[RMDB]
RNA sequence: GGGAACGACUCGAGUAGAGUCGAAAAAACAGCCGACCAAUUGCACUACCAUCACAAUGGAGAAGCCAGUAGUUAACGUAGACGUAGACCCGCAGAGUCCGUUUGUCGUGCAACUGCAAAAGAGCUUGUCUGUCUUCCAAUUCGUUGGAAGACAGACAAAAGAAACAACAACAACAAC
Reactivity to 2A3 in 0.01 (KOAc 150mM, MgCl2 10mM, bicine 150mM(pH8.5), 24C), signal-to-noise 2, nucleotides 027 to 126: a020a000c070a010g010c020c010g020a040c000c010a030a100u070u030g010c010a010c030u120a140c040c000a050u070c060a030c090a090a180u130g040g000a090g040a100a020g010c000c030a000g040u050a010g010u050u040a010a020c040g000u010a020g040a020c010g000u040a060g020a020c010c000c000g030c140a010g010a050g040u000c000c000g030u020u030u090g120u120c010g000u000g040c000a020a010c000u020g000c030a010a000a000a170g080a030g000c000u000u040
Structure probing data (2A3) for a 177-nucleotide construct.
The 2A3 profile rests on 1,430 reads.
Values cover nucleotides 27 to 126.
2A3 adducts were read by reverse transcription with SuperScript II with manganese.